RNA sequence: GGGAACGACUCGAGUAGAGUCGAAAAGAAGACAACUUCGGUUGUCUUCAAGCGGCUGUUUUUCUCGCUGACUUUCAGCCCAAAACAAAAGAGUCAGCAAAACGAGACUACCCUUCGGGGUAGUCAAUACUAACUGAUGAUUCGUCAUCAGUUAGUAAAAAGAAACAACAACAACAAC
Reactivity to DMS in 0.01 (KOAc 150mM, MgCl2 10mM, bicine 150mM(pH8.5), 24C), signal-to-noise 6, nucleotides 027 to 126: g000a020a020g010a010c000a000a010c000u000u020c190g030g010u000u000g000u000c000u000u000c000a060a080g020c210g010g020c000u000g000u020u000u000u000u000c050u010c170g010c000u000g000a020c000u000u000u000c010a010g000c010c010c110a050a020a030a190c100a010a010a010a020g010a010g020u010c000a000g010c010a040a030a080a090c230g000a170g000a020c000u000a000c000c000c000u000u010c190g020g010g010g020u000a000g000u000c000a020a060
Reactivity to 2A3 in 0.01 (KOAc 150mM, MgCl2 10mM, bicine 150mM(pH8.5), 24C), signal-to-noise 4, nucleotides 027 to 126: g000a000a000g000a000c000a010a010c020u060u110c190g090g000u000u000g000u010c000u000u000c000a000a020g100c130g020g000c000u000g010u000u010u010u030u020c080u050c090g000c000u000g000a000c000u000u030u020c000a000g010c000c010c040a040a040a010a020c020a010a020a000a000g030a010g000u000c000a000g000c000a000a040a000a000c080g020a070g000a090c000u000a000c010c000c010u050u100c250g030g000g000g000u000a000g000u000c000a000a000